[RMDB]
RNA sequence: GGGAACGACUCGAGUAGAGUCGAAAAUUGAGGGGCGGGAGUUGCAAGCGCCUUACCUGCCCUAUAGGAGCCUGGCGCUGAGGCUGGACGAUGUGUUUGCUGCCCCAGACCCAGUGGCAGCCCUGCACCACAUGUUAGUAUUCGUACUAACAUGUGGAAAAGAAACAACAACAACAAC
Reactivity to 2A3 in 0.01 (KOAc 150mM, MgCl2 10mM, bicine 150mM(pH8.5), 24C), signal-to-noise 7, nucleotides 027 to 126: u140u130g060a130g000g000g010g000c030g020g020g000a070g070u130u120g100c100a180a130g130c050g040c130c000u010u040a070c000c010u010g000c010c000c010u070a100u120a050g020g000a030g030c040c040u040g050g020c020g000c000u010g030a090g020g020c020u020g010g010a030c080g100a200u140g140u030g110u140u230u270g080c060u080g010c000c000c020c030a060g040a300c020c000c010a010g010u030g050g030c000a010g000c030c010c000u030g010c030a030
Reactivity to DMS in 0.01 (KOAc 150mM, MgCl2 10mM, bicine 150mM(pH8.5), 24C), signal-to-noise 9, nucleotides 027 to 126: u000u010g010a170g010g000g000g020c020g010g000g000a080g020u000u000g020c110a140a130g010c150g010c040c050u000u000a070c030c020u000g000c010c010c010u000a060u000a050g010g000a080g020c130c040u000g000g000c030g020c010u000g000a050g000g000c010u000g010g000a100c110g000a120u010g010u010g010u000u010u010g010c040u000g010c090c030c010c010a020g000a090c010c010c000a050g010u000g000g000c010a040g000c020c040c010u000g010c190a240
Overview
The record gives the reactivity of an RNA of 177 nucleotides to 2A3 and DMS. For 2A3 the reverse transcriptase was SuperScript II with manganese. For DMS, 22,154 sequencing reads were counted. It was measured as part of the RMDB library OK2TRN. Reactivities are rounded to 0.1 and cut off at 0 and 3. The reactions ran in a buffer of 150 mM KOAc, 10 mM MgCl2 and 150 mM bicine (pH 8.5), at 24 C.